[RMDB]
RNA sequence: GGGAACGACUCGAGUAGAGUCGAAAAGUUUGUGGCAAGACUAAGGGCUUCCGGCCCGGAGUCGCAGCGAAAGCAAGUCCGAACAGGGCGCAAUAAGUCGCAGGUACUGGACCCGAAGCGGAGGUGACUAACCCACUUACUUCGGUAAGUGGGUUAGAAAAGAAACAACAACAACAAC
Reactivity to 2A3 in 0.01 (KOAc 150mM, MgCl2 10mM, bicine 150mM(pH8.5), 24C), signal-to-noise 3, nucleotides 027 to 126: g000u000u030u050g030u010g020g000c050a110a090g020a020c000u040a020a090g010g010g000c040u180u070c130c080g040g010c000c010c010g000g010a010g000u030c000g000c010a000g000c000g010a020a010a020g050c000a050a050g010u000c000c010g050a180a090c180a240g000g040g000c040g000c060a090a210u200a220a000g000u010c010g000c010a020g050g040u060a020c010u040g000g090a050c010c000c000g020a050a010g090c010g020g050a030g060g020u070g030a000
Reactivity to DMS in 0.01 (KOAc 150mM, MgCl2 10mM, bicine 150mM(pH8.5), 24C), signal-to-noise 6, nucleotides 027 to 126: g000u010u020u010g010u020g010g000c020a100a130g000a020c010u000a300a160g000g000g010c000u000u040c230c130g000g010c000c000c010g010g030a070g000u000c020g020c170a080g010c020g000a150a090a080g010c020a140a030g010u000c000c010g000a120a090c170a160g010g020g000c010g000c200a070a050u040a120a090g010u000c020g020c010a050g000g010u010a030c010u000g000g000a140c010c010c010g030a110a090g010c050g000g000a120g010g010u020g000a210
Chemical mapping of a 177-nucleotide RNA with 2A3 and DMS. It was measured as part of the RMDB libraries RFM100 and RFMREP. For DMS the reverse transcriptase was MarathonRT. The reactions ran in a buffer of 150 mM KOAc, 10 mM MgCl2 and 150 mM bicine (pH 8.5), at 24 C.